Source: RMDB library TTRDEL, as collected in RNAgym. Structure probing data (2A3 and DMS) for a 177-nucleotide construct. The 2A3 profile rests on 19,880 reads.
RNA sequence: GGGAACGACUCGAGUAGAGUCGAAAAGAUAUGGACCGCCGUAGGGAGCUGGCUCGGAAACGAGGCAGCAUCGAUCUACACGGUCCUAAGUCAAAGCUGUCCCUACGGUUCGCCGUAGGGACAGCAAGCAUUUAACUAAGUUCGCUUAGUUAAAUGCAAAAGAAACAACAACAACAAC
Reactivity to 2A3 in 0.01 (KOAc 150mM, MgCl2 10mM, bicine 150mM(pH8.5), 24C), signal-to-noise 5, nucleotides 027 to 126: g010a010u060a030u090g000g000a000c010c020g120c180c270g020u010a000g030g220g030a010g010c010u010g150g060c000u010c000g030g010a040a040a010c010g000a000g080g040c010a000g000c020a060u110c030g050a150u010c000u010a010c010a000c010g000g000u010c000c000u000a030a010g000u000c020a070a050a070g000c000u000g000u000c030c000c000u000a000c010g000g120u040u100c300g040c120c020g000u000a000g000g000g010a000c010a000g000c000a000a000
Reactivity to DMS in 0.01 (KOAc 150mM, MgCl2 10mM, bicine 150mM(pH8.5), 24C), signal-to-noise 3, nucleotides 027 to 126: g000a040u010a300u010g000g000a010c000c000g010c250c170g010u000a010g020g000g000a040g020c000u000g000g000c000u000c000g020g000a070a050a120c000g020a010g000g010c000a000g000c010a080u000c110g010a080u010c000u000a010c020a210c010g010g010u000c000c000u000a010a060g000u000c030a100a110a140g000c000u000g000u000c000c000c000u000a000c000g000g000u000u010c230g020c010c000g010u000a000g000g010g010a010c000a000g010c000a010a050

Notes: The RNA was probed in 150 mM KOAc, 10 mM MgCl2 and 150 mM bicine (pH 8.5) at 24 C. The DMS profile rests on 7,136 reads.